[RMDB]
RNA sequence: GGGAACGACUCGAGUAGAGUCGAAAAGGUAGGGCAGGCGCGCCUGGUUGUGCAGCUGGAUGGCCGCAGCGAUCUUCACCAUCUGCAGAAACGCGACCGUGCCUUCUUGCAUGCGGGUGCCUCCCGACUAGUUACGCAGGUUCGCCUGCGUAACUAGAAAAGAAACAACAACAACAAC
Reactivity to 2A3 in 0.01 (KOAc 150mM, MgCl2 10mM, bicine 150mM(pH8.5), 24C), signal-to-noise 2, nucleotides 027 to 126: g070g070u110a050g030g010g070c210a020g010g020c030g000c030g040c030c020u130g130g030u190u170g000u020g020c010a040g010c010u070g040g030a030u010g030g000c000c000g000c030a020g010c010g020a070u010c000u070u080c050a080c090c030a160u080c040u160g000c020a020g150a080a150a020c070g010c000g020a030c020c030g080u180g230c010c000u000u030c030u040u020g000c030a050u020g010c020g010g010g000u010g020c010c000u000c000c000c000g000a000
Reactivity to DMS in 0.01 (KOAc 150mM, MgCl2 10mM, bicine 150mM(pH8.5), 24C), signal-to-noise 2, nucleotides 027 to 126: g000g010u000a110g010g010g010c090a020g000g000c050g000c060g020c030c040u000g000g060u000u000g060u000g020c050a040g010c030u000g000g000a110u000g000g000c010c030g010c050a160g000c050g020a050u000c070u010u010c200a110c230c180a010u010c080u010g020c020a110g000a080a070a110c190g010c010g000a020c060c000g000u000g010c010c020u000u010c030u000u000g010c040a030u000g020c030g000g010g000u010g000c050c020u000c000c000c020g000a150